[RMDB]
RNA sequence: GGGAACGACUCGAGUAGAGUCGAAAAGCCCAUAUGUUCGCAUAUGGGCAAAUGCAGAUCUGAGCAUGCGAGCUCUCUGCGACAAAAGUCAACGCAAUAAAAAAACACGUCACUUCGGUGACGUGAACUAUAUGACCAUGUUCGCAUGGUCAUAUAGAAAAGAAACAACAACAACAAC
Reactivity to 2A3 in 0.01 (KOAc 150mM, MgCl2 10mM, bicine 150mM(pH8.5), 24C), signal-to-noise 8, nucleotides 027 to 126: g000c000c010c000a000u000a000u010g010u010u070c230g000c130a000u010a000u000g000g000g000c020a010a000a020u110g000c000a000g030a060u060c100u230g000a010g000c020a040u140g070c050g080a050g000c010u000c000u000c000u000g000c000g030a040c080a040a160a020a010g110u130c050a070a100c050g000c060a050a070u210a230a160a010a000a010a000a010c010a000c010g000u000c000a000c020u040u090c240g080g000u000g000a000c000g000u000g000a000a000
Reactivity to DMS in 0.01 (KOAc 150mM, MgCl2 10mM, bicine 150mM(pH8.5), 24C), signal-to-noise 5, nucleotides 027 to 126: g000c000c010c000a000u000a000u000g010u000u010c230g040c010a010u000a000u000g000g000g020c000a010a020a030u010g010c000a030g000a140u010c200u000g010a020g030c000a070u010g010c040g010a190g000c000u000c010u000c000u000g000c010g010a090c180a050a070a080a080g000u010c120a050a120c050g010c050a070a110u050a020a000a030a080a060a070a130c000a010c000g000u000c000a010c000u000u000c170g020g010u000g000a000c000g010u000g000a020a060
Source information
An RNA of 177 nucleotides, treated with 2A3 and DMS and read out base by base. The reactions ran in a buffer of 150 mM KOAc, 10 mM MgCl2 and 150 mM bicine (pH 8.5), at 24 C. 2A3 adducts were read by reverse transcription with SuperScript II with manganese. For DMS the reverse transcriptase was MarathonRT. The data come from the RNA Mapping Database (RMDB), library M2PK50.